[RMDB]
The record gives the reactivity of an RNA of 207 nucleotides to DMS and 2A3. The 2A3 profile rests on 962 reads. 2A3 adducts were read by reverse transcription with SuperScript II with manganese. DMS adducts were read by reverse transcription with MarathonRT. The RNA was probed in 150 mM KOAc, 10 mM MgCl2 and 150 mM bicine (pH 8.5) at 24 C. Reactivities are rounded to 0.1 and cut off at 0 and 3.

RNA sequence: GGGAACGACUCGAGUAGAGUCGAAAAGCCCAUGUUCGCAUGGGCAAAAAGCGUACUACACAGAGGCAUGGACAUGCUGAUGGAUCCCAAAUAGGAUCCGCAGCAACAGCCAUGCUCCCCACCUGUGUAUCGCAAAAAAAGCAGUUUCGACUGCUAAUUCCCGAAACUAUUUCGAUAGUUUCGGGAAAAAAGAAACAACAACAACAAC
Reactivity to DMS in 0.01 (KOAc 150mM, MgCl2 10mM, bicine 150mM(pH8.5), 24C), signal-to-noise 1, nucleotides 027 to 156: g000c000c000c010a070u040g030u010u000c300g000c030a000u000g030g030g000c000a010a020a090a000a150g010c010g010u000a070c110u000a030c020a030c000a030g010a300g000g030c010a000u000g010g000a030c100a300u000g000c000u040g010a080u010g050g040a010u000c020c000c010a010a080a240u000a060g000g020a030u020c000c010g030c010a020g010c010a070a010c050a130g000c000c000a020u020g000c030u000c130c060c040c030a300c150c020u010g000u030g020u000a020u000c000g020c000a000a000a030a020a030a040a020g020c000a040g000u010u000u000c200g000a080c000u000g040c030u010a030a140
Reactivity to 2A3 in 0.01 (KOAc 150mM, MgCl2 10mM, bicine 150mM(pH8.5), 24C), signal-to-noise 1, nucleotides 027 to 156: g000c000c040c000a000u000g050u030u110c170g000c100a000u000g000g000g000c060a080a000a000a040a000g000c010g060u060a090c040u000a030c000a000c000a020g010a000g010g000c000a030u000g000g000a030c010a060u030g040c010u030g020a300u120g000g000a000u060c010c060c010a120a130a090u200a100g000g020a000u000c000c000g050c000a000g000c010a040a090c070a020g030c000c000a000u000g000c000u020c000c000c000c000a010c000c010u010g010u010g040u020a060u300c090g000c080a020a010a020a020a020a020a020g190c000a010g000u250u000u120c130g110a020c000u000g010c000u000a030a190